[RMDB]
Chemical mapping of a 170-nucleotide RNA with 2A3 and DMS.

RNA sequence: GGGAACGACUCGAGUAGAGUCGAAAAUGGCGAAAAUGCCUAUGAAGUGGUGAAGGCCAUGUUACUUAAAAAGGAGCCACUUCUCUAUGUGCCCAUCCGGCUGGCUGGACACACUAGACACCUCCCAGAAGAGCAUGCUUCGGCAUGCUCAAAAGAAACAACAACAACAAC
Reactivity to 2A3 in 0.01 (KOAc 150mM, MgCl2 10mM, bicine 150mM(pH8.5), 24C), signal-to-noise 4, nucleotides 027 to 129: u080g000g000c010g120a090a140a110a060u300g000c000c000u040a100u110g000a000a000g000u010g000g000u020g050a100a040g190g010c000c020a020u080g090u120u140a130c040u080u100a070a030a020a020a060g040g010a020g010c000c000a000c000u040u010c000u000c010u020a030u020g000u010g000c000c000c000a000u000c010c020g270g030c200u210g020g000c000u000g000g000a000c020a000c010a010c050u020a020g010a040c000a060c030c030u000c000c000c010a020g050a150a020
Reactivity to DMS in 0.01 (KOAc 150mM, MgCl2 10mM, bicine 150mM(pH8.5), 24C), signal-to-noise 3, nucleotides 027 to 129: u000g000g010c040g030a080a040a100a040u090g000c020c000u030a100u050g010a010a000g010u000g020g000u000g000a030a020g040g040c020c040a050u010g020u040u030a040c160u000u000a030a070a080a130a010g000g090a300g010c000c000a030c040u000u000c050u030c050u000a040u020g010u000g020c070c030c010a010u020c080c040g030g000c220u090g090g060c080u040g020g000a080c010a060c030a000c210u030a040g000a100c220a080c090c040u020c000c000c000a090g000a090a120
2A3 adducts were read by reverse transcription with SuperScript II with manganese.